[RMDB]
RNA sequence: GGGAACGACUCGAGUAGAGUCGAAAAAUGGCACAAAUCAAAGAGAAGACUCGUGUCUUCUUGACACCAUAUAUAUGCUAUGUGCACUCAAAGAAUUGAGAAGCACACAUCAGAAAACCAUUCCUUUAGAUAACCUUAUAUUCGUAUAAGGUUAUCUAAAAGAAACAACAACAACAAC
Reactivity to 2A3 in 0.01 (KOAc 150mM, MgCl2 10mM, bicine 150mM(pH8.5), 24C), signal-to-noise 9, nucleotides 027 to 126: a000u050g020g010c110a050c070a090a130a060u160c070a130a130a040g050a010g010a020a000g010a010c020u070c300g200u240g020u220c000u000u000c000u000u010g010a010c010a030c040c030a020u040a000u020a010u010a010u160g050c070u050a030u080g000u000g000c010a010c020u010c010a050a080a070g190a240a280u090u040g010a010g020a210a030g010c010a000c000a010c010a030u100c040a020g130a070a080a020a030c020c010a020u030u030c000c000u000u000u010
Reactivity to DMS in 0.01 (KOAc 150mM, MgCl2 10mM, bicine 150mM(pH8.5), 24C), signal-to-noise 6, nucleotides 027 to 126: a040u000g010g030c110a100c180a110a120a100u010c160a060a110a230g000a020g000a010a020g000a020c010u030c300g010u020g020u000c000u000u020c000u000u000g000a160c210a120c040c040a020u020a040u010a090u010a070u000g010c090u010a050u000g010u000g000c000a230c000u000c000a010a040a220g030a120a160u010u000g000a000g000a110a100g050c000a010c000a010c070a040u010c040a020g000a120a040a070a110c050c050a130u010u000c000c030u000u010u000